Annotation:
This 177-nucleotide RNA was probed chemically with DMS and 2A3. DMS adducts were read by reverse transcription with MarathonRT. 2A3 adducts were read by reverse transcription with SuperScript II with manganese.
[RMDB]
RNA sequence: GGGAACGACUCGAGUAGAGUCGAAAAGAUAUGGACCCGGAGGGAGCUGCGUUUCGGAAACGAAACGGCAGCUUUGAUCUCCUGGGUCCUAAGUCAAAACUUGCCGAUAGUUCGCUAUCGGCAAGAACCACAAGAUAAUGUUCGCAUUAUCUUGUGGAAAAGAAACAACAACAACAAC
Reactivity to DMS in 0.01 (KOAc 150mM, MgCl2 10mM, bicine 150mM(pH8.5), 24C), signal-to-noise 3, nucleotides 027 to 126: g000a010u000a010u020g000g000a010c010c000c000g010g010a030g010g000g020a000g040c000u000g010c010g010u000u000u000c000g010g000a010a000a020c000g010a000a010a000c010g010g030c000a010g010c000u000u010u010g010a030u000c010u000c000c000u030g040g010g000u000c000c000u000a000a060g000u000c000a130a100a140a220c010u000u000g010c000c000g010a010u000a010g010u000u010c280g010c000u000a000u000c000g010g000c000a000a000g000a040a230
Reactivity to 2A3 in 0.01 (KOAc 150mM, MgCl2 10mM, bicine 150mM(pH8.5), 24C), signal-to-noise 2, nucleotides 027 to 126: g010a000u010a000u020g000g000a000c020c010c000g010g000a010g010g010g000a010g000c000u000g010c010g010u000u000u000c000g000g020a010a000a000c000g010a000a020a000c020g080g060c010a000g000c020u010u060u000g000a000u000c000u000c000c010u030g010g000g000u010c000c000u000a000a000g000u000c010a010a000a020a100c000u000u000g000c000c010g000a010u000a000g030u060u090c300g000c230u000a000u010c010g000g000c000a000a000g000a000a040